[RMDB]
RNA sequence: GGGAACGACUCGAGUAGAGUCGAAAACUGCACUUGGAAGACUUGCUAUCUAAGUCAUUAUGGGCAAAAGGGACCCUAUGGCUUAGGGGAAAGUCCCCGGACACUGGGUAGAGAGUACCUGGGGUGUGAGUAGAUUUUACUUCGGUAAAAUCUACUCAAAAGAAACAACAACAACAAC
Reactivity to 2A3 in 0.01 (KOAc 150mM, MgCl2 10mM, bicine 150mM(pH8.5), 24C), signal-to-noise 1, nucleotides 027 to 126: c030u080g010c040a040c050u050u140g030g050a030a040g010a030c010u030u000g020c000u150a210u300c010u010a000a000g040u000c000a010u070u210a130u240g000g000g030c020a020a040a170a170g100g070g160a220c010c010c000u000a000u010g000g010c010u010u010a000g030g000g000g010a000a130a000g030u000c020c000c010c030g060g010a070c040a010c070u010g000g000g030u030a030g040a010g000a030g250u030a000c010c010u020g000g000g000g060u070g010u010